[RMDB]
RNA sequence: GGGAACGACUCGAGUAGAGUCGAAAAUGAGCGAUUCAUUUAUCUUAAGUCGAUAAAUGCUUAUUGCUCUCUUAGCGAUAUUGCGGCCUAUCACGCCGAUGGCGUGAUAGUUGGCUUUUGGCGCGAUCCAUCCAGCGGUGGUGCCAUACCGUUUGACGAUGUGGUGAAUCUUCGGAUUCACCACAUCAAAAGAAACAACAACAACAAC
Reactivity to 2A3 in 0.01 (KOAc 150mM, MgCl2 10mM, bicine 150mM(pH8.5), 24C), signal-to-noise 2, nucleotides 027 to 156: u180g000a010g000c000g000a000u020u000c010a000u000u000u000a030u000c020u100u300a220a080g120u270c040g020a000u010a010a010a010u100g010c100u080u120a020u010u000g040c010u010c000u040c040u040u080a050g030c020g070a050u030a040u090u200g040c030g020g070c000c000u000a010u000c000a000c010g020c000c010g230a200u300g030g000c010g000u000g000a000u000a010g000u000u060g070g000c000u010u040u030u170g070g050c030g000c000g110a050u000c000c000a060u110c030c070a010g050c070g040g030u050g000g060u060g090c000c020a010u030a060c000c010g000u010u060u100g050a060c090

The record gives the reactivity of an RNA of 207 nucleotides to 2A3. Values cover nucleotides 27 to 156. For 2A3, 787 sequencing reads were counted. 2A3 adducts were read by reverse transcription with SuperScript II with manganese. The RNA was probed in 150 mM KOAc, 10 mM MgCl2 and 150 mM bicine (pH 8.5) at 24 C.